[RMDB]
RNA sequence: GGGAACGACUCGAGUAGAGUCGAAAAUCCCAAAGGUUGCCGAAUCCGAAAGGUCAGGAGGAACCGCUUUUUGGGGUUAAUCUGCAGUGAAGCUGCAGUAGGGAUACCUUCUGUCCCGCACCCGACAGCUAACUCCCGAGGCAAUAAAGGAAGGAGAAAUUAAUCGGUAGUUCGCUACCGAUUAAUUAAAAGAAACAACAACAACAAC
Reactivity to 2A3 in 0.01 (KOAc 150mM, MgCl2 10mM, bicine 150mM(pH8.5), 24C), signal-to-noise 3, nucleotides 027 to 156: u000c000c000c020a020a040a000g030g010u030u010g010c010c000g090a130a170u060c010c010g030a090a060a020g020g010u020c070a030g010g010a000g010g010a060a070c060c020g020c060u090u110u030u080u180g040g000g020g000u010u020a060a040u040c000u000g000c000a000g000u070g240a160a030g150c000u000g000c000a000g000u000a010g000g000g010a000u090a140c000c000u030u020c010u030g020u010c000c000c000g000c010a040c000c000c020g020a100c080a030g000c000u030a040a030c000u000c000c000c000g040a030g000g000c020a010a010u080a130a100a010g030g010a030a000g050g020a060g060a050
Reactivity to DMS in 0.01 (KOAc 150mM, MgCl2 10mM, bicine 150mM(pH8.5), 24C), signal-to-noise 3, nucleotides 027 to 156: u000c000c000c000a070a110a160g010g020u000u000g010c000c030g010a160a300u000c040c020g000a150a190a130g010g020u000c000a060g010g000a080g010g000a140a180c070c030g010c080u010u000u000u000u000g020g020g010g010u010u000a060a140u000c000u010g010c010a020g000u000g020a150a220g010c010u000g010c010a030g040u000a060g020g000g000a070u000a060c030c110u000u000c050u000g020u000c140c000c000g030c100a110c040c010c010g000a080c100a050g020c010u020a100a230c030u000c010c010c020g010a120g010g020c020a070a080u000a040a110a070g000g000a070a020g010g040a260g020a160